[RMDB]
RNA sequence: GGGAACGACUCGAGUAGAGUCGAAAAGAUAUGGACCGUCAGUCAGAGCCUGUGGUCGGAAACGACCACGAGGCGACGAAGACUACGGUCCUAAGUCAAAACUUGGGCUGGUUCGCCAGCCCAAGAAGAUAACUAAUGUCUUCGGACAUUAGUUAUCAAAAGAAACAACAACAACAAC
Reactivity to DMS in 0.01 (KOAc 150mM, MgCl2 10mM, bicine 150mM(pH8.5), 24C), signal-to-noise 6, nucleotides 027 to 126: g010a020u000a030u010g010g000a010c000c000g010u010c300a010g010u000c010a060g010a080g020c000c010u000g000u000g010g000u000c000g010g000a010a010a040c010g020a020c000c000a010c000g010a020g030g010c000g010a070c250g020a220a300g000a010c000u000a010c000g000g000u000c000c000u000a000a040g000u000c000a140a100a150a200c000u000u000g000g010g020c000u000g010g010u010u020c300g010c000c000a000g000c000c000c000a000a000g000a060a090
Reactivity to 2A3 in 0.01 (KOAc 150mM, MgCl2 10mM, bicine 150mM(pH8.5), 24C), signal-to-noise 3, nucleotides 027 to 126: g000a000u010a000u020g010g000a000c000c020g010u030c070a020g000u010c010a020g030a030g270c010c000u020g010u000g000g000u010c000g000g020a010a000a000c000g000a000c010c000a010c010g040a020g010g000c010g000a090c050g080a020a000g000a000c000u010a000c020g010g010u000c000c000u000a000a000g010u000c010a010a010a100a180c000u000u010g000g020g000c000u000g000g060u080u120c280g080c100c000a000g000c000c000c000a000a000g000a000a000

Chemical mapping of a 177-nucleotide RNA with DMS and 2A3. The reactions ran in a buffer of 150 mM KOAc, 10 mM MgCl2 and 150 mM bicine (pH 8.5), at 24 C. 2A3 adducts were read by reverse transcription with SuperScript II with manganese.